[RMDB]
RNA sequence: GGGAACGACUCGAGUAGAGUCGAAAAAGCGGCCCUUUCGAGGGCCGCUGAUGGAAAGCCAGCCGAAAGGCAUUUUAUUCCUUGGCUGGCGAAAGCGUAAAAUUCACGCUGCUUUCGAGCAGCGUAACUUUCAGGGAUUAUUCGUAAUCCCUGAAAGAAAAGAAACAACAACAACAAC
Reactivity to 2A3 in 0.01 (KOAc 150mM, MgCl2 10mM, bicine 150mM(pH8.5), 24C), signal-to-noise 1, nucleotides 027 to 126: a000g020c020g040g030c000c000c140u000u030u090c180g170a000g010g030g060c020c000g010c000u010g000a000u000g060g040a100a000a000g000c020c020a010g020c100c030g150a170a090a010g020g030c020a020u000u080u030u090a100u100u020c020c000u000u030g000g000c010u000g020g000c020g000a020a010a020g100c050g060u170a010a000a110a190u160u180c040a020c020g000c000u000g000c020u050u020u060c290g060a010g000c010a030g000c000g000u010a000a020
Reactivity to DMS in 0.01 (KOAc 150mM, MgCl2 10mM, bicine 150mM(pH8.5), 24C), signal-to-noise 4, nucleotides 027 to 126: a010g010c000g050g000c010c000c000u010u000u010c130g030a030g020g020g020c010c010g010c000u000g000a050u010g010g000a120a120a240g000c000c000a020g010c000c000g020a040a030a020g000g000c300a040u000u010u000u000a130u000u010c000c010u000u000g010g010c000u000g010g010c000g000a010a060a080g000c140g000u010a080a040a090a130u010u000c100a050c000g020c000u000g000c000u000u000u010c150g010a020g020c000a000g010c000g000u000a020a040

The record gives the reactivity of an RNA of 177 nucleotides to 2A3 and DMS. Conditions: 150 mM KOAc, 10 mM MgCl2 and 150 mM bicine (pH 8.5), 24 C. The DMS profile rests on 4,290 reads. For 2A3, 943 sequencing reads were counted. For 2A3 the reverse transcriptase was SuperScript II with manganese. Source: RMDB library M2PK50, as collected in RNAgym. DMS adducts were read by reverse transcription with MarathonRT. Values cover nucleotides 27 to 126.